Overview: Structure probing data (2A3 and DMS) for a 177-nucleotide construct. The reactions ran in a buffer of 150 mM KOAc, 10 mM MgCl2 and 150 mM bicine (pH 8.5), at 24 C. 2A3 is a SHAPE reagent: it acylates the 2'-hydroxyl of flexible nucleotides of all four kinds. Reactivities are given for positions 27 through 126.
RNA sequence: GGGAACGACUCGAGUAGAGUCGAAAAGAUAUGGAACCACUCGGCUAGAUCGUAUUCGGAAACGAAUACAGAUCUUGGACCCGAGGUGGUUCCUAAGUCAAAACGCGACAUUCUUCGGAAUGUCGCGCCAUAAAAGACACUUCGGUGUCUUUUAUGGAAAAGAAACAACAACAACAAC
Reactivity to 2A3 in 0.01 (KOAc 150mM, MgCl2 10mM, bicine 150mM(pH8.5), 24C), signal-to-noise 4, nucleotides 027 to 126: g000a000u050a010u120g000g000a000a000c000c000a000c010u000c000g050g000c130u150a060g010a010u000c000g000u010a010u010u000c010g010g010a050a040a030c020g000a020a010u010a010c110a150g020a000u000c000u010u160g210g110a120c040c010c020g000a030g090g090u040g000g000u000u000c000c000u000a010a000g010u000c030a000a050a080a120c030g000c000g000a000c010a010u010u000c010u050u110c300g110g000a010a000u030g000u010c000g010c000g030
Reactivity to DMS in 0.01 (KOAc 150mM, MgCl2 10mM, bicine 150mM(pH8.5), 24C), signal-to-noise 5, nucleotides 027 to 126: g000a040u010a300u010g000g010a010a010c000c000a030c010u000c000g010g000c060u010a030g010a000u000c000g010u000a000u000u010c000g000g000a080a090a180c000g000a010a000u000a010c000a100g010a000u000c000u010u010g020g000a150c300c000c010g000a020g010g010u000g020g010u000u010c000c000u000a010a060g000u000c030a090a080a100a300c030g020c010g000a010c000a010u000u000c010u000u020c230g020g000a010a010u010g000u000c010g010c000g000